[RMDB]
Record summary
This 177-nucleotide RNA was probed chemically with 2A3. The reactions ran in a buffer of 150 mM KOAc, 10 mM MgCl2 and 150 mM bicine (pH 8.5), at 24 C. Reactivities are given for positions 27 through 126. It was measured as part of the RMDB library M2PK50.
RNA sequence: GGGAACGACUCGAGUAGAGUCGAAAAACGUACCUAUUCGUAGGUACGUGAUUAAAAGCUAGUCUUAUAAAAGGAAGACUAGCAAUAUAGAAUCCUAUAUUAAUAGCACAUGUUUCGACAUGUGCAAGGACAACCAAAAGUUCGCUUUUGGUUGUCCAAAAGAAACAACAACAACAAC
Reactivity to 2A3 in 0.01 (KOAc 150mM, MgCl2 10mM, bicine 150mM(pH8.5), 24C), signal-to-noise 1, nucleotides 027 to 126: a000c000g000u000a000c000c000u000a040u020u110c200g000u040a000g010g020u000a020c030g000u000g010a000u020u120a070a070a000a000g030c000u000a000g000u000c000u020u100a130u050a150a280a080a030g300g020a050a030g010a020c020u000a000g040c000a010a020u040a000u000a000g100a030a020u040c020c030u030a050u040a100u300u220a250a270u040a210g000c000a000c000a000u010g030u010u050u160c300g110a010c030a000u000g020u030g000c000a010a000